[RMDB]
RNA sequence: GGGAACGACUCGAGUAGAGUCGAAAACUUGAGGAGACAAAUCAGUCAAUGGUAUACGACUACCACCAAUGAAUGGACCAUUUGCUGUUAGUAUCAUGGUCGUUUCGCCAGAAUAUGUCUUAUCAUCCCUCUAAUCCUCCUUCGGGAGGAUUAGAGGAAAAGAAACAACAACAACAAC
Reactivity to DMS in 0.01 (KOAc 150mM, MgCl2 10mM, bicine 150mM(pH8.5), 24C), signal-to-noise 2, nucleotides 027 to 126: c030u000u010g000a130g000g010a040g000a020c050a180a120a140u000c000a030g000u000c200a080a060u000g000g020u010a010u030a160c110g010a110c080u000a190c090c020a000c050c070a060a150u000g030a120a030u000g020g010a140c010c080a000u050u040u030g000c040u000g000u060u010a130g030u000a080u010c120a080u000g000g000u000c030g000u010u000u000c090g000c000c070a030g000a070a050u030a100u000g000u010c000u000u050a080u000c150a020u030c010
Reactivity to 2A3 in 0.01 (KOAc 150mM, MgCl2 10mM, bicine 150mM(pH8.5), 24C), signal-to-noise 7, nucleotides 027 to 126: c040u060u110g040a020g020g040a010g020a010c020a020a080a080u070c010a000g050u020c000a000a010u030g030g010u080a140u030a170c090g110a080c140u130a090c010c050a050c000c050a140a110u240g140a120a110u090g070g040a020c010c010a010u020u030u050g000c010u010g020u130u060a070g060u050a050u180c110a160u050g020g000u020c070g040u020u020u050c030g010c000c000a000g060a060a030u190a110u130g020u010c020u020u070a080u120c030a060u080c010
The data come from the RNA Mapping Database (RMDB), library OK1LIB.
The record gives the reactivity of an RNA of 177 nucleotides to DMS and 2A3.
Values cover nucleotides 27 to 126.
For DMS, 1,698 sequencing reads were counted.
The reactions ran in a buffer of 150 mM KOAc, 10 mM MgCl2 and 150 mM bicine (pH 8.5), at 24 C.